The record gives the reactivity of an RNA of 177 nucleotides to DMS and 2A3. Conditions: 150 mM KOAc, 10 mM MgCl2 and 150 mM bicine (pH 8.5), 24 C. The data come from the RNA Mapping Database (RMDB), libraries RFM100 and RFMREP. The DMS profile rests on 1,993 reads.

RNA sequence: GGGAACGACUCGAGUAGAGUCGAAAAACCUGCAGCGAAUUACAUCGACUGAUAUUAAUAUAAAAAUAGAUGUACACGUUCAACGACUAGCGAGUGAUGUAAAUCAGUCAAAUAAUCUCGCCACGAGGUACUACACAGUCUUCGGACUGUGUAGUACAAAAGAAACAACAACAACAAC
Reactivity to DMS in 0.01 (KOAc 150mM, MgCl2 10mM, bicine 150mM(pH8.5), 24C), signal-to-noise 2, nucleotides 027 to 126: a150c010c000u000g030c010a300g000c000g010a050a080u000u000a000c050a070u000c090g000a050c010u040g000a010u000a070u040u010a090a110u010a220u100a040a100a120a010a140u120a100g000a130u090g000u040a060c200a050c030g050u010u050c050a050a130c160g020a090c140u060a070g030c080g000a030g010u010g000a080u000g000u000a020a040a010u000c020a000g000u000c030a070a040a140u010a010a030u000c210u000c000g000c010c070a050c190g010a240g000
Reactivity to 2A3 in 0.01 (KOAc 150mM, MgCl2 10mM, bicine 150mM(pH8.5), 24C), signal-to-noise 5, nucleotides 027 to 126: a000c000c010u030g020c050a030g000c010g020a030a030u070u000a020c020a070u080c090g030a030c010u010g060a010u010a070u120u130a100a130u170a070u160a130a070a010a040a080u160a040g030a080u080g030u060a040c050a010c040g040u080u070c070a170a020c050g110a060c120u050a040g040c030g030a030g030u060g040a140u050g020u060a020a000a080u030c010a010g030u000c010a010a030a030u060a020a040u060c050u010c120g020c030c010a040c040g010a030g140